Description: An RNA of 177 nucleotides, treated with 2A3 and DMS and read out base by base. The 2A3 profile rests on 10,921 reads. Source: RMDB library TTRDES, as collected in RNAgym. The RNA was probed in 150 mM KOAc, 10 mM MgCl2 and 150 mM bicine (pH 8.5) at 24 C. For DMS, 4,172 sequencing reads were counted.

RNA sequence: GGGAACGACUCGAGUAGAGUCGAAAAGAUAUGGAUCCCGUAGGGAGCUGUACAUCGGAAACGAUGUAUCAGCAUCGAUCUACAGGGAUCCUAAGUCAAAAGUUCGACACGGUUCGCCGUGUCGAACGACACAAUUGACGUUCGCGUCAAUUGUGUCAAAAGAAACAACAACAACAAC
Reactivity to 2A3 in 0.01 (KOAc 150mM, MgCl2 10mM, bicine 150mM(pH8.5), 24C), signal-to-noise 3, nucleotides 027 to 126: g000a000u010a010u030g000g000a000u000c000c020c010g010u010a010g010g060g040a090g000c010u010g000u010a000c000a010u000c000g000g000a020a010a000c000g010a010u030g010u020a020u180c090a000g010c010a010u270c050g000a050u000c000u030a040c200a250g020g000g010a000u000c000c000u000a010a000g010u000c020a010a040a140a120g000u000u010c000g000a000c010a000c020g000g190u100u120c300g050c170c000g000u010g000u000c000g000a000a000c010
Reactivity to DMS in 0.01 (KOAc 150mM, MgCl2 10mM, bicine 150mM(pH8.5), 24C), signal-to-noise 3, nucleotides 027 to 126: g000a010u000a050u010g000g000a010u000c000c000c000g040u000a000g000g000g000a030g070c000u000g020u000a010c000a010u000c000g020g000a020a000a040c000g020a020u000g000u000a010u020c070a020g040c010a300u010c240g000a060u020c000u010a010c010a210g020g000g010a010u000c010c000u000a000a080g010u010c010a110a080a080a200g010u010u000c000g000a020c010a010c000g020g000u000u010c300g020c020c000g040u000g010u010c000g010a000a000c000